An RNA of 177 nucleotides, treated with 2A3 and DMS and read out base by base.
[RMDB]
RNA sequence: GGGAACGACUCGAGUAGAGUCGAAAACCAGGCCUUGACAAGCUAGCCGGAGGAGCGCCUAGGAACCCGAGCCGGAGCUCAGCGAGCGCAGCCUGCACGCCCGCCUCGCGUCCCGGGGGGGUCCCGCAUAAAAUAAAGGUUUCGACCUUUAUUUUAUAAAAGAAACAACAACAACAAC
Reactivity to 2A3 in 0.01 (KOAc 150mM, MgCl2 10mM, bicine 150mM(pH8.5), 24C), signal-to-noise 7, nucleotides 027 to 126: c010c000a010g030g010c000c010u080u100g050a060c030a070a040g030c020u060a030g030c030c020g030g020a040g010g040a050g020c030g020c020c020u030a050g030g030a050a060c020c010c020g000a040g070c010c020g040g000a070g010c020u050c100a030g020c030g040a020g020c060g000c040a010g020c000c020u100g020c050a020c060g010c000c020c010g060c010c000u010c010g010c020g030u030c000c010c000g000g000g010g010g000g000g010u020c010c000c000g030c020
Reactivity to DMS in 0.01 (KOAc 150mM, MgCl2 10mM, bicine 150mM(pH8.5), 24C), signal-to-noise 9, nucleotides 027 to 126: c010c010a120g000g010c030c030u000u010g010a120c100a110a130g000c040u010a080g020c030c020g000g000a090g000g010a070g020c070g000c040c030u010a080g020g010a080a080c030c020c020g010a160g010c020c020g000g000a210g010c060u010c150a120g010c030g000a040g020c070g010c060a130g000c030c020u010g010c060a200c070g000c030c020c030g000c040c020u010c080g000c030g000u020c050c030c010g000g000g000g000g000g000g000u000c010c010c030g010c170
The reactions ran in a buffer of 150 mM KOAc, 10 mM MgCl2 and 150 mM bicine (pH 8.5), at 24 C.